Chemical mapping of a 177-nucleotide RNA with 2A3.
Source: RMDB library OK1LIB, as collected in RNAgym.
High 2A3 reactivity points to a flexible backbone, as in loops and unpaired stretches.
RNA sequence: GGGAACGACUCGAGUAGAGUCGAAAAGAUGAAAAUAACCAACAAUGUGAUCUUGCUUGCGGAGGCAAAGUUUGCACAGUAUAAAAUCUGCGAGUAGUGCUAUUGUUGGAAAGGAUACUGUGCAAAACCAUGCCUGGGCAUUCGUGCCCAGGCAUGGAAAAGAAACAACAACAACAAC
Reactivity to 2A3 in 0.01 (KOAc 150mM, MgCl2 10mM, bicine 150mM(pH8.5), 24C), signal-to-noise 2, nucleotides 027 to 126: g010a040u220g110a000a010a020a300u300a020a000c000c000a000a070c000a010a010u180g120u070g300a300u130c000u000u000g000c000u000u000g000c000g000g020a000g070g070c000a020a040a000g030u030u090u040g000c000a000c000a000g000u000a000u080a110a180a030a100u000c000u000g030c060g000a000g070u090a050g200u020g070c000u000a000u050u040g000u030u000g000g000a000a000a000g180g010a040u070a010c000u000g000u050g000c000a000a000a000a000